Conditions: 150 mM KOAc, 10 mM MgCl2 and 150 mM bicine (pH 8.5), 24 C. An RNA of 177 nucleotides, treated with 2A3 and DMS and read out base by base. For DMS the reverse transcriptase was MarathonRT.
[RMDB]
RNA sequence: GGGAACGACUCGAGUAGAGUCGAAAAGCAGCUAGUUACGACUAGCUGCAAAUGCCGCCCGAACGGCUUCCUGACCGGGCGGAUUCACUUUAAAUGGAGCAAACGUACGGUAUACGUACCGUACGAAUAUAAUUACGCCCUUCGGGGCGUAAUUAUAAAAAGAAACAACAACAACAAC
Reactivity to 2A3 in 0.01 (KOAc 150mM, MgCl2 10mM, bicine 150mM(pH8.5), 24C), signal-to-noise 3, nucleotides 027 to 126: g000c000a000g000c010u010a000g000u050u070a110c230g020a020c190u000a000g000c000u010g000c000a000a010a000u130g000c000c000g060c000c000c000g000a040a010c040g040g000c000u220u190c030c000u020g040a050c000c000g000g000g010c000g030g000a020u110u130c170a100c090u060u240u250a040a080a050u110g000g000a000g000c030a080a010a030c000g000u010a000c010g000g050u000a000u030a030c300g120u010a010c010c000g000u000a000c000g000a000a000
Reactivity to DMS in 0.01 (KOAc 150mM, MgCl2 10mM, bicine 150mM(pH8.5), 24C), signal-to-noise 2, nucleotides 027 to 126: g000c000a000g040c000u000a000g030u010u000a060c170g040a080c000u000a000g010c000u000g000c030a010a000a050u020g000c050c000g000c000c000c000g020a040a280c130g000g020c010u030u030c000c100u000g000a130c230c000g000g040g010c000g010g010a060u010u000c100a090c090u000u050u020a000a070a050u090g030g000a090g000c050a170a150a140c010g000u050a000c020g000g030u000a000u000a110c220g050u000a000c000c000g000u000a000c020g020a050a020
It was measured as part of the RMDB library OK1LIB.
High DMS reactivity at an A or C suggests that its Watson-Crick edge is free.
The 2A3 profile rests on 1,407 reads.